[RMDB]
Chemical mapping of a 177-nucleotide RNA with DMS and 2A3. For 2A3 the reverse transcriptase was SuperScript II with manganese. The 2A3 profile rests on 23,268 reads. Conditions: 150 mM KOAc, 10 mM MgCl2 and 150 mM bicine (pH 8.5), 24 C.

RNA sequence: GGGAACGACUCGAGUAGAGUCGAAAAGACUUUGUUAAGGCCCGAUAUGUAUGACUAUGUCGAAUAUAUACAAAGUAUAAGGAUGGGCCUUAAAUCGACGUCAUAGAUCGAUUAUAUAUCCAUCCAAGAUUGUUGACUAUUUCGAUAGUUAGCAAUCAAAAGAAACAACAACAACAAC
Reactivity to DMS in 0.01 (KOAc 150mM, MgCl2 10mM, bicine 150mM(pH8.5), 24C), signal-to-noise 7, nucleotides 027 to 126: g010a050c020u000u000u000g010u010u030a090a090g010g010c090c040c000g010a060u000a010u000g000u010a070u020g010a030c090u030a080u040g010u010c000g000a080a070u010a040u000a030u010a040c020a020a000a020g000u010a080u030a090a000g010g000a020u020g010g000g020c240c110u000u000a010a030a010u000c000g010a010c020g000u010c300a120u050a110g000a090u000c020g000a010u000u000a050u020a000u010a050u020c010c020a020u000c020c010a070a100
Reactivity to 2A3 in 0.01 (KOAc 150mM, MgCl2 10mM, bicine 150mM(pH8.5), 24C), signal-to-noise 7, nucleotides 027 to 126: g030a000c000u010u010u010g010u040u120a070a020g090g050c000c000c000g000a010u010a000u020g120u010a080u130g040a020c060u030a030u160g020u010c010g050a090a000u050a000u000a000u000a030c000a010a000a000g010u000a050u020a110a000g000g000a000u020g000g010g000c040c000u010u020a000a000a010u000c000g000a010c000g050u140c050a040u060a050g150a190u000c000g000a000u030u000a030u010a000u000a010u000c000c000a000u000c000c000a010a020